[RMDB]
RNA sequence: GGGAACGACUCGAGUAGAGUCGAAAAUGCCACUGAAUUAUCUUACUGUCUGAUUAUUCCAUCUUCCUCUGCAUCAUAUUAGCCUGAUGACUACAUUCUAAUUAUUUAAAGCGUUAUGUAAAUCAAAGCAGUAAAUGUAAUUUCUAGUCUUACUAGACUCGGUCGAUUUAUUCGUAAAUCGACCGAGAAAAGAAACAACAACAACAAC
Reactivity to 2A3 in 0.01 (KOAc 150mM, MgCl2 10mM, bicine 150mM(pH8.5), 24C), signal-to-noise 1, nucleotides 027 to 156: u090g010c040c040a070c010u020g040a010a080u100u010a010u060c010u050u060a000c000u020g110u070c010u010g040a090u030u070a020u200u110c030c000a100u030c020u110u040c010c010u050c060u040g000c000a010u040c010a020u080a090u210u190a070g040c020c030u010g090a090u060g020a160c010u070a050c090a040u080u080c040u110a150a190u130u170a150u100u110u170a060a090a020g030c040g040u070u020a080u060g070u090a140a000a000u070c060a070a040a100g000c020a000g020u090a120a050a050u050g010u020a000a090u000u020u000c010u010a030g000u000c020u110u060a050c020u070a030g040a000

An RNA of 207 nucleotides, treated with 2A3 and read out base by base. 2A3 is a SHAPE reagent: it acylates the 2'-hydroxyl of flexible nucleotides of all four kinds. The reactions ran in a buffer of 150 mM KOAc, 10 mM MgCl2 and 150 mM bicine (pH 8.5), at 24 C. Source: RMDB library OK3TST, as collected in RNAgym.